[RMDB]
RNA sequence: GGGAACGACUCGAGUAGAGUCGAAAAGCACUAGAGGGCGUAACGGCUGGGUGUAACCCAACUCUAGGUGUGCUGAUUAGCGGGCUUGACUCCGUAACUAAUAGGCACUGGUGGUAAAAAGCAUCCCUGACCAUAUACAUCUUCGGAUGUAUAUGAAUCAGCUUUAUCUCUUCGGAGAUAAAGCUGAAAAAGAAACAACAACAACAAC
Reactivity to 2A3 in 0.01 (KOAc 150mM, MgCl2 10mM, bicine 150mM(pH8.5), 24C), signal-to-noise 2, nucleotides 027 to 156: g010c010a010c040u010a010g000a020g000g000g000c020g020u070a150a040c100g120g030c000u020g010g020g000u040g070u080a050a040c000c000c000a000a030c000u010c000u000a060g050g030u030g000u010g050c000u000g020a120u000u070a020g010c000g020g050g000c090u160u170g030a120c070u050c110c010g010u000a030a010c000u000a000a080u050a030g010g030c010a010c040u060g080g040u100g030g060u110a050a060a000a000a000g010c010a030u000c000c000c000u000g040a030c020c020a000u000a000u000a000c000a000u020c000u010u040c150g110g010a000u000g000u010a000u000a000u000g000a000a070
Reactivity to DMS in 0.01 (KOAc 150mM, MgCl2 10mM, bicine 150mM(pH8.5), 24C), signal-to-noise 2, nucleotides 027 to 156: g020c000a020c040u000a100g020a050g030g000g000c020g020u000a150a140c250g000g000c010u020g030g020g030u000g000u010a070a300c020c010c010a070a050c020u000c040u000a090g020g030u000g010u010g050c000u010g000a040u010u000a050g050c000g000g040g020c110u020u010g000a150c150u000c000c040g000u000a080a000c000u010a020a090u000a100g010g000c020a040c040u010g000g000u000g010g030u000a040a070a060a090a180g010c060a130u000c010c030c010u010g010a220c260c020a040u020a010u010a010c000a010u000c000u000u020c300g060g000a050u000g020u000a010u010a000u010g000a040a110

The record gives the reactivity of an RNA of 207 nucleotides to 2A3 and DMS.
Values cover nucleotides 27 to 156.
The data come from the RNA Mapping Database (RMDB), library M2RFPK.
The 2A3 profile rests on 1,268 reads.
DMS adducts were read by reverse transcription with MarathonRT.